About this RNA
Conditions: 150 mM KOAc, 10 mM MgCl2 and 150 mM bicine (pH 8.5), 24 C. The record gives the reactivity of an RNA of 207 nucleotides to 2A3. Reactivities are given for positions 27 through 156. 2A3 adducts were read by reverse transcription with SuperScript II with manganese.

RNA sequence: GGGAACGACUCGAGUAGAGUCGAAAAUACCGCAGGCCUGCGGUGCGGCAGUGUGGGGACCUGCCGUAAGCCGUGUUGUUUUGACAACCGGGAGAAAGCGUAUGCGGAGGCAGCGCUUUCAGGGUCUAAAAGUAUGGGAUCUUCGGAUCCCAUACAACUGUGAUACACUGUUCGCAGUGUAUCACAGAAAAGAAACAACAACAACAAC
Reactivity to 2A3 in 0.01 (KOAc 150mM, MgCl2 10mM, bicine 150mM(pH8.5), 24C), signal-to-noise 2, nucleotides 027 to 156: u110a000c000c000g000c000a010g000g000c000c030u020g000c010g000g000u000g000c000g000g000c010a000g000u020g000u020g040g010g000g000a030c010c000u010g000c000c000g000u010a010a000g040c010c030g130u150g030u120u010g010u000u120u120u300g090a010c000a000a010c010c000g010g000g000a010g010a000a000a000g010c000g000u060a290u170g020c020g010g090a060g240g060c010a000g000c000g000c000u010u000u000c010a000g000g000g000u000c010u030a000a060a000a080g000u000a000u000g000g000g000a010u000c000u010u050c150g070g000a000u000c000c010c000a000u000a000c000a000a000
Record summary: It was measured as part of the RMDB library M2RFPK.